[RMDB]
RNA sequence: GGGAACGACUCGAGUAGAGUCGAAAAGGCUCAGGAAACUGAGCCAAGAAUGUUCAGAGAAAAGAACUAGUGACUGCUCAGAACAGAAUAAAAGUACACUAGAAAAUAGGAGCAGGAAACUGCUCCAAAUAGUGGAGUGGUUCGCCACUCCACUAUUAAAAGAAACAACAACAACAAC
Reactivity to DMS in 0.01 (KOAc 150mM, MgCl2 10mM, bicine 150mM(pH8.5), 24C), signal-to-noise 3, nucleotides 027 to 126: g010g010c010u030c000a000g000g000a180a130a150c000u000g000a000g060c030c000a090a050g000a170a110u030g000u000u010c020a060g000a100g000a070a020a110a060g030a240a110c030u000a000g000u000g010a180c020u000g000c040u000c020a100g000a000a030c020a030g020a120a140u030a050a110a060a070g000u030a090c010a010c000u000a000g010a260a020a090a110u050a090g020g000a040g000c010a000g020g000a100a060a110c000u000g000c000u000c010c000a000
Reactivity to 2A3 in 0.01 (KOAc 150mM, MgCl2 10mM, bicine 150mM(pH8.5), 24C), signal-to-noise 3, nucleotides 027 to 126: g000g000c000u000c000a000g000g000a070a130a140c000u000g010a000g000c000c000a000a000g010a060a080u080g020u000u030c030a010g030a000g030a080a280a050a030g040a080a070c000u000a000g000u000g050a080c020u010g000c000u010c010a030g000a060a010c040a010g270a100a040u200a190a080a020a000g150u200a080c000a010c040u000a020g070a040a110a000a000u210a100g000g000a000g000c000a000g010g000a020a060a020c000u010g000c000u030c000c010a000
Chemical mapping of a 177-nucleotide RNA with DMS and 2A3. The reactions ran in a buffer of 150 mM KOAc, 10 mM MgCl2 and 150 mM bicine (pH 8.5), at 24 C. The DMS profile rests on 3,054 reads. High DMS reactivity at an A or C suggests that its Watson-Crick edge is free. 2A3 adducts were read by reverse transcription with SuperScript II with manganese. Reactivities are given for positions 27 through 126. Source: RMDB library OK1LIB, as collected in RNAgym.